[RMDB]
RNA sequence: GGGAACGACUCGAGUAGAGUCGAAAAGUAUAGAAGCAUGAGACCGCAUGCGAUAUACGAUGAAUCACGGUCGAAUCCGUUGUGCGAAAGCACUUCGGUAAUGCAUAUCGGUAGGCAGAUCUGCCCGGAUCAGCUACCGUAAUUAGUACGGGCAAGAGCAUAUUAGCAGGUUCGCCUGCUAAUAUGCAAAAGAAACAACAACAACAAC
Reactivity to DMS in 0.01 (KOAc 150mM, MgCl2 10mM, bicine 150mM(pH8.5), 24C), signal-to-noise 2, nucleotides 027 to 156: g010u010a030u010a040g010a180a210g020c000a030u030g020a170g000a090c070c080g040c010a100u000g030c010g000a210u000a050u000a090c030g000a180u000g000a120a090u010c070a080c040g010g010u000c020g000a220a150u000c000c000g030u000u000g010u000g060c000g030a170a150a240g040c010a000c000u000u000c000g050g020u000a050a060u000g040c050a160u000a140u010c000g040g000u000a020g040g000c000a080g010a040u020c030u000g000c000c020c020g000g010a100u000c050a150g000c020u000a050c000c020g040u000a030a060u020u000a110g020u000a060c030g050g060g010c070a110a030g020a170
Reactivity to 2A3 in 0.01 (KOAc 150mM, MgCl2 10mM, bicine 150mM(pH8.5), 24C), signal-to-noise 5, nucleotides 027 to 156: g040u030a050u040a100g120a130a020g000c000a000u000g000a010g010a160c010c020g030c020a020u070g060c010g010a000u020a000u000a080c110g010a020u140g130a080a130u180c070a040c050g010g000u000c030g020a020a050u070c000c010g010u000u000g010u000g000c000g060a070a050a020g020c000a000c000u000u000c000g010g000u040a030a040u140g050c060a050u090a070u200c010g030g000u010a020g200g160c110a080g010a000u000c010u060g000c000c000c000g000g000a010u020c010a030g020c000u000a000c000c000g000u000a000a010u070u070a010g130u040a060c010g010g010g000c040a090a060g080a020